[RMDB]
Record summary:
This 177-nucleotide RNA was probed chemically with DMS and 2A3. DMS adducts were read by reverse transcription with MarathonRT. Conditions: 150 mM KOAc, 10 mM MgCl2 and 150 mM bicine (pH 8.5), 24 C. The DMS profile rests on 26,499 reads.
RNA sequence: GGGAACGACUCGAGUAGAGUCGAAAAGGAGGCUAUUAGCCUUCCUGAUGAGUCCGUUCCAAGGACGAAACCGUCUCUCCUGACUCCCGGUUCUGGUUGGGGACUGUACCAACCAGUUACUUCCGGUCAAUAACUAAUUGUUCGCAAUUAGUUAUUGAAAAGAAACAACAACAACAAC
Reactivity to DMS in 0.01 (KOAc 150mM, MgCl2 10mM, bicine 150mM(pH8.5), 24C), signal-to-noise 9, nucleotides 027 to 126: g000g010a040g000g010c000u000a150u000u010a050g020c000c000u010u010c000c010u000g010a110u010g010a130g010u000c050c060g010u000u000c050c060a130a120g010g010a030c030g010a060a080a100c100c040g000u010c020u000c060u000c030c020u000g000a090c090u000c090c050c010g000g010u000u000c000u000g000g010u000u000g000g000g000g000a130c200u000g010u010a080c000c000a010a010c000c000a010g000u000u000a030c200u000u000c020c030g010g010u000
Reactivity to 2A3 in 0.01 (KOAc 150mM, MgCl2 10mM, bicine 150mM(pH8.5), 24C), signal-to-noise 9, nucleotides 027 to 126: g010g000a000g010g000c030u080a150u300u290a240g000c010c000u070u100c010c000u030g020a060u140g010a000g020u060c130c060g010u070u000c040c020a040a050g040g000a020c050g040a180a050a020c070c010g030u010c020u000c010u010c020c030u040g060a080c020u050c020c000c010g000g010u030u010c000u010g000g000u000u010g000g010g000g120a180c110u120g090u130a050c000c000a000a000c000c000a000g000u000u020a040c020u060u000c010c000g010g030u010

It was measured as part of the RMDB library VIROID.